[RMDB]
RNA sequence: GGGAACGACUCGAGUAGAGUCGAAAAGGUUCGCAGGGUUGUUGUUCUGCAAAACACUCUUUUGACUUGGGAAUAGUGGUGAAAGGCCAAUCAAGGCCGGCGACAGCUGGUUCCACUCGAAAUGACUAGUAACUGAAUGAUUCGUCAUUCAGUUACUAAAAGAAACAACAACAACAAC
Reactivity to 2A3 in 0.01 (KOAc 150mM, MgCl2 10mM, bicine 150mM(pH8.5), 24C), signal-to-noise 4, nucleotides 027 to 126: g110g000u040u060c040g020c040a000g000g070g060u040u030g010u020u050g020u070u030c010u010g020c000a000a050a000a040c070a070c010u100c000u030u000u060u040g080a080c040u050u060g070g000g020a060a050u080a070g040u040g160g020u070g070a120a040a050g050g000c000c000a030a060u140c100a140a120g000g000c000c000g000g000c000g040a010c020a020g010c010u040g000g040u020u010c000c000a030c000u050c000g020a030a040a070u170g060a070c040u000
Reactivity to DMS in 0.01 (KOAc 150mM, MgCl2 10mM, bicine 150mM(pH8.5), 24C), signal-to-noise 3, nucleotides 027 to 126: g000g000u010u010c270g020c020a070g040g000g000u000u000g000u020u020g010u000u010c040u000g020c060a050a060a070a150c110a070c090u000c030u000u010u010u040g020a070c090u010u000g020g010g020a050a060u010a040g000u020g020g030u000g010a100a260a070g000g020c010c000a070a080u010c280a100a110g010g010c060c000g000g010c240g000a060c150a090g020c030u000g010g020u000u000c010c010a100c200u000c050g000a020a090a080u010g000a060c100u010